Structure probing data (2A3 and DMS) for a 177-nucleotide construct. For 2A3 the reverse transcriptase was SuperScript II with manganese. The DMS profile rests on 11,860 reads. The data come from the RNA Mapping Database (RMDB), library 15KREP.

RNA sequence: GGGAACGACUCGAGUAGAGUCGAAAACCUCAUUAUGGCUUAUGGCAAUUGCACAUUUGGUGCUCCAGAUGAUGCCUCUCGGUUACUUCAUACCGUGCUUGCAAAGGCUGAGUUAUGCUGUUCUGCAGAUUACAGAUAAGUUCGCUUAUCUGUAAUCAAAAGAAACAACAACAACAAC
Reactivity to 2A3 in 0.01 (KOAc 150mM, MgCl2 10mM, bicine 150mM(pH8.5), 24C), signal-to-noise 4, nucleotides 027 to 126: c010c010u060c050a080u070u210a090u140g030g000c010u060u050a030u170g050g020c020a050a130u130u090g000c020a010c010a060u060u040u080g080g010u100g050c030u050c010c000a030g010a050u060g010a070u050g020c000c000u000c010u000c010g000g040u020u070a070c040u130u180c030a040u070a090c000c020g010u020g030c070u030u070g000c010a040a020a030g040g000c010u040g000a030g080u090u050a070u130g030c040u070g090u080u030c000u010g000c000a030
Reactivity to DMS in 0.01 (KOAc 150mM, MgCl2 10mM, bicine 150mM(pH8.5), 24C), signal-to-noise 8, nucleotides 027 to 126: c020c000u010c130a070u010u010a080u010g000g010c040u000u000a060u010g010g010c080a060a060u010u000g010c020a070c020a060u000u000u000g000g010u010g020c260u010c020c030a030g000a030u000g000a120u000g020c030c230u010c040u000c020g000g010u000u010a090c180u010u000c200a100u010a040c030c010g020u000g000c280u000u000g010c060a030a080a120g010g010c010u000g000a110g000u010u000a070u010g010c050u000g010u000u000c020u000g000c230a220